Annotation:
An RNA of 177 nucleotides, treated with 2A3 and DMS and read out base by base. It was measured as part of the RMDB library 15KREP. For 2A3 the reverse transcriptase was SuperScript II with manganese. Values cover nucleotides 27 to 126. The reactions ran in a buffer of 150 mM KOAc, 10 mM MgCl2 and 150 mM bicine (pH 8.5), at 24 C. The DMS profile rests on 1,158 reads.
[RMDB]
RNA sequence: GGGAACGACUCGAGUAGAGUCGAAAAAGUAAGAAACAUGUAGAAGUUUUUACUGAUGGUAAGCUUAAUUGUAGUUUCCAGGACGCUGCCUCUAAUAUCUUUGUUAUUAACAAGGACACUUAUGCAGGAAGAACAAUCUGUUCGCAGAUUGUUCUUCAAAAGAAACAACAACAACAAC
Reactivity to 2A3 in 0.01 (KOAc 150mM, MgCl2 10mM, bicine 150mM(pH8.5), 24C), signal-to-noise 2, nucleotides 027 to 126: a000g060u050a040a000g080a100a070a000c040a010u160g050u210a030g120a300a110g020u040u010u020u050u060a050c020u030g030a070u050g030g080u030a020a010g030c020u050u170a110a050u300u110g090u070a070g010u030u010u000c000c010a010g040g020a040c050g020c070u000g020c020c000u000c010u030a050a030u030a030u020c010u040u000u000g030u030u100a300u160u150a040a000c000a010a000g000g030a010c010a040c060u050u060a050u170g000c000a010g010
Reactivity to DMS in 0.01 (KOAc 150mM, MgCl2 10mM, bicine 150mM(pH8.5), 24C), signal-to-noise 2, nucleotides 027 to 126: a020g010u010a020a020g000a010a020a050c030a020u000g020u000a150g000a150a160g000u000u000u010u000u000a040c000u000g000a170u000g010g010u010a070a110g000c020u000u010a040a130u000u010g000u000a070g000u000u010u000c010c050a150g030g010a110c250g010c040u000g010c000c010u000c030u000a030a020u000a080u000c000u010u000u000g010u000u000a110u010u010a090a000c010a010a020g000g000a010c050a010c300u010u000a000u030g000c040a040g010